Conditions: 150 mM KOAc, 10 mM MgCl2 and 150 mM bicine (pH 8.5), 24 C. This 177-nucleotide RNA was probed chemically with DMS. The data come from the RNA Mapping Database (RMDB), library OK2TST. For DMS the reverse transcriptase was MarathonRT.

[RMDB]
RNA sequence: GGGAACGACUCGAGUAGAGUCGAAAAAAAGGAAGGAGGUUUGGUUUGUGUUUAUCUUUCCCUGCACAAAUUUGGUUACCAGAAAAUGCCCUUGAAGCCCAGGGCAGUCUUCUAGAGAGUAUGUGAGUGGGAAUCUUAUUUUCGAAUAAGAUUCCCAAAAAGAAACAACAACAACAAC
Reactivity to DMS in 0.01 (KOAc 150mM, MgCl2 10mM, bicine 150mM(pH8.5), 24C), signal-to-noise 2, nucleotides 027 to 126: a050a060a070g000g000a040a040g000g000a110g010g000u000u010u010g010g020u000u000u010g010u010g010u000u000u000a070u010c110u000u000u000c030c010c000u010g010c030a030c020a010a020a070u000u000u010g020g010u000u000a100c070c050a100g010a030a020a100a090u000g000c020c000c010u010u030g020a130a080g010c080c040c100a060g000g000g000c010a020g000u010c070u000u000c020u000a080g000a140g000a070g010u000a060u010g000u000g010a130g050